[RMDB]
Notes:
The record gives the reactivity of an RNA of 207 nucleotides to 2A3. The RNA was probed in 150 mM KOAc, 10 mM MgCl2 and 150 mM bicine (pH 8.5) at 24 C.
RNA sequence: GGGAACGACUCGAGUAGAGUCGAAAAUGAUACAAGUGAGGUAGUAGAUGAAGAUGAGACACUUAGUAGUACAUCUUAUUCUUCAGCCAGAUCUAGUUCAGCUUCCAAGAAGAGAAUUAAAUCAUAUUUCGGCAUAAUGUCUAUGAAUAAAAAACCAGUUAAGGGCAUGGUUCGCCAUGCCCUUAACAAAAGAAACAACAACAACAAC
Reactivity to 2A3 in 0.01 (KOAc 150mM, MgCl2 10mM, bicine 150mM(pH8.5), 24C), signal-to-noise 1, nucleotides 027 to 156: u060g000a020u020a050c080a050a050g040u020g070a030g040g000u020a000g050u020a030g050a120u090g120a000a030g000a000u010g030a000g030a130c000a010c020u030u130a080g010u030a020g000u030a130c000a020u000c000u000u020a050u010u000c000u000u030c010a000g090c000c020a040g000a090u000c020u140a000g000u040u000c040a020g000c020u120u000c050c000a050a090g020a080a000g050a000g010a010a010u060u050a100a080a020u020c010a050u170a110u090u100u070c060g000g030c040a070u060a170a030u280g000u050c030u130a020u120g050a050a020u280a170a090a040a020a000a050c070c020a010
The data come from the RNA Mapping Database (RMDB), library OK3TST.